[RMDB]
RNA sequence: GGGAACGACUCGAGUAGAGUCGAAAAGAUAUGGAUCAUGAUAGGACAUGAUCGAGGGAUCGGAAACGAUCCGUAGAUCAACAGCCUAUCCGCUGAUCCUAAGUCAAACGGUAACUUCGGUUACCGACACAUAAUCACACUUCGGUGUGAUUAUGUGAAAAGAAACAACAACAACAAC
Reactivity to DMS in 0.01 (KOAc 150mM, MgCl2 10mM, bicine 150mM(pH8.5), 24C), signal-to-noise 7, nucleotides 027 to 126: g010a050u000a300u000g010g000a010u010c000a000u010g000a080u010a010g000g010a060c090a300u010g000a010u000c000g000a300g000g000g010a000u010c010g000g000a140a110a250c010g010a000u000c000c000g010u000a300g010a000u010c000a050a060c300a180g010c000c000u000a010u000c000c010g010c010u010g000a000u000c010c000u000a030a130g010u000c040a100a090a300c020g000g000u000a000a010c000u000u000c230g020g010u000u000a000c010c000g000a170
Reactivity to 2A3 in 0.01 (KOAc 150mM, MgCl2 10mM, bicine 150mM(pH8.5), 24C), signal-to-noise 4, nucleotides 027 to 126: g030a000u080a030u170g000g000a000u000c000a000u180g010a000u010a010g020g030a040c110a190u110g000a010u010c000g000a110g020g020g000a010u000c010g020g000a130a060a040c010g000a000u000c010c010g000u000a000g000a000u000c000a000a010c030a000g050c000c000u000a010u020c000c000g000c010u000g000a000u000c000c000u010a100a010g070u010c050a130a050a050c010g000g010u010a000a000c000u060u130c300g130g000u010u000a000c000c000g050a010